An RNA of 177 nucleotides, treated with DMS and 2A3 and read out base by base. As a SHAPE reagent, 2A3 marks flexible, mostly unpaired nucleotides at the ribose 2'-OH. For DMS, 1,069 sequencing reads were counted. It was measured as part of the RMDB library RFMREP. The reactions ran in a buffer of 150 mM KOAc, 10 mM MgCl2 and 150 mM bicine (pH 8.5), at 24 C.
RNA sequence: GGGAACGACUCGAGUAGAGUCGAAAAUCGCCGUCUCGCAAACGGGCACUGGCUUCAGGAGAGGAUGUUCCAUGGCCGUAAGCGCAGGCACACCACAGUGCCUGCUAUCACGGCAUUAUCGCCAGCGGUAUGGAUGAACGUUCGCGUUCAUCCAUACAAAAGAAACAACAACAACAAC
Reactivity to DMS in 0.01 (KOAc 150mM, MgCl2 10mM, bicine 150mM(pH8.5), 24C), signal-to-noise 2, nucleotides 027 to 126: u020c060g000c050c030g000u000c000u000c180g010c160a050a210a070c010g000g000g030c170a060c050u000g040g000c030u000u020c110a090g010g000a140g000a070g040g020a050u030g020u000u000c010c020a060u050g010g020c000c000g000u000a050a020g010c250g020c010a000g010g000c010a020c000a080c150c180a080c230a090g000u000g000c000c000u010g000c000u000a010u000c150a010c080g000g010c000a040u000u020a050u000c160g000c010c020a100g000c110g000
Reactivity to 2A3 in 0.01 (KOAc 150mM, MgCl2 10mM, bicine 150mM(pH8.5), 24C), signal-to-noise 1, nucleotides 027 to 126: u100c000g020c050c000g000u000c000u000c030g030c050a020a050a070c030g000g080g000c060a050c070u040g030g000c020u110u090c110a030g010g080a060g030a010g180g060a100u040g050u050u000c040c030a060u010g100g010c010c000g030u010a020a040g020c000g000c060a000g010g020c010a010c000a010c030c010a130c020a030g000u000g010c010c000u010g000c000u000a010u010c030a000c000g000g000c000a020u090u090a100u010c050g000c000c010a050g030c090g100